[RMDB]
RNA sequence: GGGAACGACUCGAGUAGAGUCGAAAAGAUAUGGAUCAUGACAUGAGUAACAAUCGGAAACGAUUGACUCAACAGCAUGAAUCCUAAGUCAAACAUGCCGUUAGGACUUCGGUCCUAACGGCAUGAACAAUUGGAGGUACUUCGGUACCUCCAAUUGAAAAGAAACAACAACAACAAC
Reactivity to DMS in 0.01 (KOAc 150mM, MgCl2 10mM, bicine 150mM(pH8.5), 24C), signal-to-noise 4, nucleotides 027 to 126: g020a040u000a300u010g000g020a020u000c000a010u000g000a040c050a290u000g010a010g010u010a100a090c010a010a000u000c000g000g000a120a070a250c000g000a020u010u000g000a080c000u000c000a020a040c250a130g000c000a000u000g000a060a070u000c000c000u000a060a110g010u000c030a130a080a300c000a000u000g000c000c000g000u000u000a010g010g010a020c010u000u020c190g030g000u000c000c000u000a000a000c000g000g000c000a000u000g010a040a200
Reactivity to 2A3 in 0.01 (KOAc 150mM, MgCl2 10mM, bicine 150mM(pH8.5), 24C), signal-to-noise 1, nucleotides 027 to 126: g060a010u080a020u260g020g000a000u000c030a030u010g070a250c040a050u060g010a010g060u140a300a130c000a010a010u000c020g000g000a040a070a060c000g010a000u030u010g020a060c000u000c030a050a100c060a030g060c010a000u010g020a140a120u060c010c000u060a170a040g090u090c110a000a000a170c030a060u010g000c000c030g070u000u000a000g000g020a060c010u050u100c300g070g010u000c000c020u000a000a000c040g000g010c020a000u000g000a000a000
Background
Source: RMDB library TTRDEL, as collected in RNAgym. Chemical mapping of a 177-nucleotide RNA with DMS and 2A3. For DMS the reverse transcriptase was MarathonRT.